Chemical mapping of a 177-nucleotide RNA with DMS and 2A3. The reactions ran in a buffer of 150 mM KOAc, 10 mM MgCl2 and 150 mM bicine (pH 8.5), at 24 C. Values cover nucleotides 27 to 126.
RNA sequence: GGGAACGACUCGAGUAGAGUCGAAAACUAGUGCCAUUCGUGGCACUAGAAGGGGUCCAGCCUGGAAAGGCUGGAGGUAUUGGAAUGGUCGGGCGGCCAUUCAAGGUACGCUAUUCGUAGCGUACAAAUCUAUAAUUGAUUUCGAUCAAUUAUAGAUAAAAGAAACAACAACAACAAC
Reactivity to DMS in 0.01 (KOAc 150mM, MgCl2 10mM, bicine 150mM(pH8.5), 24C), signal-to-noise 8, nucleotides 027 to 126: c000u000a000g010u000g000c000c000a040u000u010c200g020u000g000g000c000a000c000u000a000g000a110a150g000g000g000g010u000c000c000a010g010c000c000u000g010g030a120a160a020g000g010c000u000g000g010a010g010g010u010a090u010u010g010g000a020a010u000g010g010u000c050g010g010g020c160g010g000c010c000a000u000u000c020a120a090g010g000u000a000c000g010c000u000a020u000u010c190g010u000a000g010c000g020u000a000c000a040a070
Reactivity to 2A3 in 0.01 (KOAc 150mM, MgCl2 10mM, bicine 150mM(pH8.5), 24C), signal-to-noise 7, nucleotides 027 to 126: c000u000a000g000u000g010c000c000a030u040u050c250g100u070g000g000c000a000c000u000a000g000a010a010g020g010g010g010u000c000c000a000g000c000c010u070g100g130a210a110a020g010g000c000u000g010g040a000g040g010u110a110u100u300g130g010a010a010u020g000g030u040c060g050g100g060c110g020g000c010c000a000u000u010c010a000a010g130g000u000a000c000g000c000u000a030u020u090c200g090u040a000g000c000g000u000a010c000a000a090